[RMDB]
RNA sequence: GGGAACGACUCGAGUAGAGUCGAAAACGCCUUGUCGCCCUCACUGGCAUAGCGCUGCUGCAGCUCAUGGGCGAACUGCUCGUGCCUGGGCCACUGGCUAUGGGGCAGAAAGUCGAUGGUGGCACCGGCCUCCCAUCCAAUUCGUUGGAUGGGAGGCAAAAGAAACAACAACAACAAC
Reactivity to 2A3 in 0.01 (KOAc 150mM, MgCl2 10mM, bicine 150mM(pH8.5), 24C), signal-to-noise 3, nucleotides 027 to 126: c040g030c000c010u050u090g100u050c030g020c000c000c000u020c020a080c040u050g040g010c030a080u090a050g030c170g040c130u200g000c050u100g020c050a040g020c020u060c090a080u110g020g010g000c020g010a020a030c040u090g000c000u010c000g020u020g100c000c000u020g000g060g000c000c000a050c030u040g010g000c020u030a050u080g040g040g040g040c020a010g130a060a070a010g100u170c150g050a060u110g060g020u010g000g020c020a030c030c040g090
Reactivity to DMS in 0.01 (KOAc 150mM, MgCl2 10mM, bicine 150mM(pH8.5), 24C), signal-to-noise 2, nucleotides 027 to 126: c150g020c050c040u000u010g010u010c010g020c000c010c050u000c160a090c130u000g000g020c000a100u000a040g010c040g040c110u000g010c100u000g010c040a090g040c050u030c060a060u000g020g000g010c020g010a060a120c120u010g000c060u000c020g020u010g020c110c010u000g010g010g020c020c050a040c030u000g000g000c010u000a060u010g000g020g010g000c020a040g000a080a060a110g010u000c110g000a090u000g010g000u000g010g000c030a130c140c060g020